[RMDB]
RNA sequence: GGGAACGACUCGAGUAGAGUCGAAAACCUACCCAAGGUGAAAGCUCCUUCUCUCGCAAUGUGUAACUCAUGAUUCUCAUGACCCCUGGUUGGAGAGAUCCGGACUAGGAGUCAGGGGGCCUCUGAUAAAGCCAGACGCACUUCGGUGCGUCUGGAACGAUAUUAAGUAGUUCGCUACUUAAUAUCGAAAAGAAACAACAACAACAAC
Reactivity to 2A3 in 0.01 (KOAc 150mM, MgCl2 10mM, bicine 150mM(pH8.5), 24C), signal-to-noise 3, nucleotides 027 to 156: c000c000u020a030c030c010c000a060a040g000g000u050g070a160a040a030g030c000u050c000c000u070u030c030u010c010u030c030g070c090a050a090u110g050u050g020u170a060a030c010u030c060a030u110g020a090u220u050c060u010c040a070u050g000a010c000c010c010c020u010g030g000u000u030g030g000a020g000a000g010a060u010c040c040g070g020a020c000u020a010g000g020a010g000u010c010a010g010g000g000g000g010c000c020u030c030u050g070a110u130a130a080a010g050c000c000a000g000a000c010g000c000a000c000u040u110c180g050g000u000g000c000g010u000c000u000g000g000a000a000
Reactivity to DMS in 0.01 (KOAc 150mM, MgCl2 10mM, bicine 150mM(pH8.5), 24C), signal-to-noise 2, nucleotides 027 to 156: c040c020u000a140c040c020c020a080a110g030g010u000g000a060a110a120g010c020u000c010c010u020u000c050u010c020u000c070g000c060a100a030u010g000u020g000u000a070a100c080u000c020a080u010g020a130u010u000c040u000c020a130u010g020a070c010c000c000c000u000g020g020u000u000g040g020a060g000a230g010a170u000c020c040g020g000a060c020u000a060g030g020a050g020u020c010a090g020g040g030g040g010c140c010u000c020u020g020a110u010a060a060a170g010c010c010a000g010a010c000g010c020a010c000u010u000c270g010g030u020g020c000g010u000c000u000g020g010a000a010
Conditions: 150 mM KOAc, 10 mM MgCl2 and 150 mM bicine (pH 8.5), 24 C. This 207-nucleotide RNA was probed chemically with 2A3 and DMS. The 2A3 profile rests on 2,947 reads. 2A3 adducts were read by reverse transcription with SuperScript II with manganese. For DMS, 3,132 sequencing reads were counted.